[RMDB]
RNA sequence: GGGAACGACUCGAGUAGAGUCGAAAAUCAUUGAGAUGCUGGGCGCUAUGGUCGUCCUCCUCCGGCUGACCUCCUUCUCAGCUGCUGACCGGCGCCGCACAGGCGGCAUCUCAGCUUCGUGUGGAAAAAAAGAAUGGUCGGUUCGCCGACCAUUCAACUUUCAAAUCCUGUUCGCAGGAUUUGAAAGAAAAGAAACAACAACAACAAC
Reactivity to 2A3 in 0.01 (KOAc 150mM, MgCl2 10mM, bicine 150mM(pH8.5), 24C), signal-to-noise 1, nucleotides 027 to 156: u140c030a040u040u110g000a000g000a000u000g000c020u050g010g030g000c000g000c020u060a210u300g030g030u030c030g050u100c020c030u030c000c010u050c010c000g000g030c000u000g000a040c000c060u160c000c080u300u110c040u010c040a000g000c030u020g030c110u140g000a010c000c040g020g010c050g040c000c010g010c020a030c020a030g170g020c020g020g000c010a000u020c000u000c010a000g000c010u170u200c060g040u080g000u040g110g020a000a040a020a000a000a020a040g000a000a000u000g000g010u000c010g000g050u030u060c150g030c070c000g000a010c020c000a000u000u000c000a000a000
Reactivity to DMS in 0.01 (KOAc 150mM, MgCl2 10mM, bicine 150mM(pH8.5), 24C), signal-to-noise 2, nucleotides 027 to 156: u000c050a100u010u020g010a000g010a030u000g040c000u000g030g000g010c010g030c020u000a040u000g020g010u000c040g040u000c100c020u000c020c020u020c030c020g040g020c020u010g010a070c080c080u000c100c140u000u020c090u000c000a040g050c040u000g020c090u010g010a050c010c010g010g000c010g120c000c020g000c030a050c130a130g050g000c020g040g030c000a010u000c010u000c010a050g010c120u000u000c100g050u000g030u010g030g020a040a000a090a130a150a150a280g020a030a040u000g000g030u000c000g020g010u000u010c300g030c000c010g010a040c010c060a000u000u000c010a060a120

Conditions: 150 mM KOAc, 10 mM MgCl2 and 150 mM bicine (pH 8.5), 24 C. This 207-nucleotide RNA was probed chemically with 2A3 and DMS. It was measured as part of the RMDB library M2RFPK. For DMS, 3,223 sequencing reads were counted.